[RMDB]
RNA sequence: GGGAACGACUCGAGUAGAGUCGAAAAGCCAUGUGACUUUUGUCGCAUGGCGACGACGUAGUUUUCUACGUCGGAGAGUCGUCUACCUUUCGCCCUGGUAGGCCUCUCUGCCGAACAGGACUUUUGUCGUGUGAGGUAGUGAGUGAUUUGGGCAUCAACCUAAUGGCCAGUUCGCUGGCCAUUAGGUAAAAGAAACAACAACAACAAC
Reactivity to 2A3 in 0.01 (KOAc 150mM, MgCl2 10mM, bicine 150mM(pH8.5), 24C), signal-to-noise 1, nucleotides 027 to 156: g040c000c000a000u000g020u000g000a030c000u040u110u280u300g040u000c000g000c000a000u000g000g020c000g000a000c010g000a000c000g000u040a020g040u090u220u180u030c030u000a000c000g000u000c010g030g030a070g000a000g040u070c040g010u020c020u000a040c000c000u080u020u080c070g010c000c000c000u040g000g010u000a010g010g010c010c000u020c000u000c000u000g000c000c000g020a020a000c000a000g100g000a000c040u220u280u260u300g020u050c160g080u020g020u000g000a020g000g000u020a000g000u000g030a000g000u040g050a150u150u230u270g020g010g010c040a020u060c050a010